Conditions: 150 mM KOAc, 10 mM MgCl2 and 150 mM bicine (pH 8.5), 24 C. Structure probing data (DMS and 2A3) for a 177-nucleotide construct. As a SHAPE reagent, 2A3 marks flexible, mostly unpaired nucleotides at the ribose 2'-OH. The DMS profile rests on 2,183 reads.
[RMDB]
RNA sequence: GGGAACGACUCGAGUAGAGUCGAAAAUGGACGUUCACUGCGUAUCCCUAAGAUACAUUCUGAAUGCUCUCGAGAAUGAGUUGCAGUACAGAGCGAUUCUCCUCGUAGAAAGUGCGAGUGAAAUUGACCUCCUAGGGGUAUUCGUACCCCUAGGAGGAAAAGAAACAACAACAACAAC
Reactivity to DMS in 0.01 (KOAc 150mM, MgCl2 10mM, bicine 150mM(pH8.5), 24C), signal-to-noise 3, nucleotides 027 to 126: u000g010g010a070c070g000u000u000c110a060c040u010g000c040g020u000a050u010c010c040c170u020a160a180g000a040u000a060c050a120u020u000c050u010g000a120a060u000g000c040u000c010u000c040g000a070g000a090a060u000g010a050g030u010u010g000c000a040g020u020a150c130a150g000a060g000c020g010a100u000u000c020u000c040c000u000c010g020u010a070g000a070a070a120g000u010g000c030g010a020g000u000g020a020a060a090u000u000g010a220
Reactivity to 2A3 in 0.01 (KOAc 150mM, MgCl2 10mM, bicine 150mM(pH8.5), 24C), signal-to-noise 2, nucleotides 027 to 126: u120g050g060a000c050g000u000u010c040a030c050u080g000c010g030u020a060u020c050c000c000u040a100a030g020a050u050a070c060a110u110u120c060u130g130a100a070u140g000c000u000c000u000c040g120a130g080a090a070u090g000a030g030u090u110g040c000a010g000u010a040c040a040g020a020g030c030g000a010u020u000c010u000c020c010u000c000g000u030a030g150a210a150a030g290u100g020c000g010a000g000u110g000a000a040a110u060u080g030a040